Chemical mapping of a 177-nucleotide RNA with 2A3 and DMS. The RNA was probed in 150 mM KOAc, 10 mM MgCl2 and 150 mM bicine (pH 8.5) at 24 C. DMS adducts were read by reverse transcription with MarathonRT.
RNA sequence: GGGAACGACUCGAGUAGAGUCGAAAACAUACGAUGGGUGAGAUUAAAAACACAUCUUAACAUUGUCUGCGCAUGACCCUUAGAUCUGCGGAGCUAAGAGGUAGAUCGUAUUUACGUGCCACAUCGGGAUCGUCAUGCCUUUCGAGGCAUGACGAUCAAAAGAAACAACAACAACAAC
Reactivity to 2A3 in 0.01 (KOAc 150mM, MgCl2 10mM, bicine 150mM(pH8.5), 24C), signal-to-noise 1, nucleotides 027 to 126: c010a050u210a000c010g040a010u040g000g090g000u080g020a050g020a100u140u170a110a040a020a100a030c050a020c020a100u000c000u050u040a050a010c040a160u060u070g000u040c050u160g020c020g000c050a060u190g030a050c130c000c000u030u070a050g020a160u030c000u030g000c050g110g000a060g010c010u020a010a020g070a070g090g050u030a030g020a070u070c050g000u000a020u000u100u020a020c050g090u040g060c000c000a140c000a110u060c020g050g020
Reactivity to DMS in 0.01 (KOAc 150mM, MgCl2 10mM, bicine 150mM(pH8.5), 24C), signal-to-noise 1, nucleotides 027 to 126: c050a040u000a100c010g010a010u000g040g010g030u000g020a130g000a100u020u020a080a020a050a050a080c190a080c110a040u000c000u010u000a080a100c070a050u000u010g000u000c160u000g000c080g030c070a040u010g000a020c010c070c100u010u000a050g000a050u000c020u000g060c070g000g020a070g020c010u000a000a040g020a070g020g000u010a080g000a000u000c040g030u000a100u000u000u010a100c190g020u020g010c000c000a100c080a010u000c040g030g000